[RMDB]
The data come from the RNA Mapping Database (RMDB), library OK1LIB.
An RNA of 177 nucleotides, treated with DMS and 2A3 and read out base by base.
Values cover nucleotides 27 to 126.
The 2A3 profile rests on 47,327 reads.
The DMS profile rests on 23,936 reads.
The reactions ran in a buffer of 150 mM KOAc, 10 mM MgCl2 and 150 mM bicine (pH 8.5), at 24 C.
RNA sequence: GGGAACGACUCGAGUAGAGUCGAAAAGGGCAGUUUUAUUUGACGACGGAAAGGCUACCAUAGUAUCCGAGGUAGCACCGCCGUAGUUUUUUUAUUAUGGCGGGGAUACGUUCGUCGUUGCUGCCCAGGGCGGAGGCUUCUUCGGGAGUCUCUGCCCAAAAGAAACAACAACAACAAC
Reactivity to DMS in 0.01 (KOAc 150mM, MgCl2 10mM, bicine 150mM(pH8.5), 24C), signal-to-noise 6, nucleotides 027 to 126: g010g000g000c000a010g000u010u030u060u030a050u020u050u030g010a010c010g000a010c000g000g010a050a090a110g010g010c010u000a000c010c010a090u030a150g020u040a080u030c140c070g010a170g000g000u000a000g030c000a130c000c010g000c000c000g020u000a000g000u000u000u040u060u040u060u010a010u010u000a010u000g000g000c000g010g000g010g010a100u030a070c120g020u010u010c000g010u000c000g010u010u000g010c010u000g000c000c010c010a040
Reactivity to 2A3 in 0.01 (KOAc 150mM, MgCl2 10mM, bicine 150mM(pH8.5), 24C), signal-to-noise 9, nucleotides 027 to 126: g000g000g000c020a020g010u050u070u120u160a240u090u200u200g020a000c000g000a000c000g020g060a060a040a020g160g000c000u000a000c000c010a080u080a150g140u120a120u120c110c080g050a060g020g000u000a000g000c000a010c000c000g000c000c000g000u000a000g000u000u010u020u020u020u090u100a030u010u000a000u010g000g000c000g000g010g000g020a020u050a120c030g020u030u060c000g000u000c000g000u000u030g000c000u000g000c000c000c000a000